[RMDB]
The data come from the RNA Mapping Database (RMDB), library OK3TST. Chemical mapping of a 207-nucleotide RNA with 2A3.

RNA sequence: GGGAACGACUCGAGUAGAGUCGAAAAUCAGACUCAACCUAAUGUUCAUAUCAAUAACUGUAAAUGCUACAUCAUCGUUAAUCCUUUGACAGAAAAGCAUCGUCUUGGAAUUAGUAAUCCAAAUCGUAGUGCAUCAGAUAUGGCAGAAGAUGUUGAGGCUAACUUGGGGGUUCGCCCCCAAGUUAGCAAAAGAAACAACAACAACAAC
Reactivity to 2A3 in 0.01 (KOAc 150mM, MgCl2 10mM, bicine 150mM(pH8.5), 24C), signal-to-noise 2, nucleotides 027 to 156: u140c010a000g060a040c000u000c000a000a000c010c000u010a130a010u020g040u140u300c000a000u000a020u030c020a040a120u100a140a050c050u030g100u170a000a130a060u100g100c070u110a080c020a100u140c010a080u050c070g040u010u080a130a040u080c010c000u080u080u190g080a060c070a140g160a100a200a030a000g040c040a020u080c030g120u030c050u020u040g010g000a020a010u080u040a140g070u090a140a150u010c030c020a020a020a070u020c060g020u010a020g030u010g020c000a070u090c000a040g000a010u000a000u010g000g000c010a000g010a050a000g030a000u140g000u010u010g000a000g000
2A3 adducts were read by reverse transcription with SuperScript II with manganese.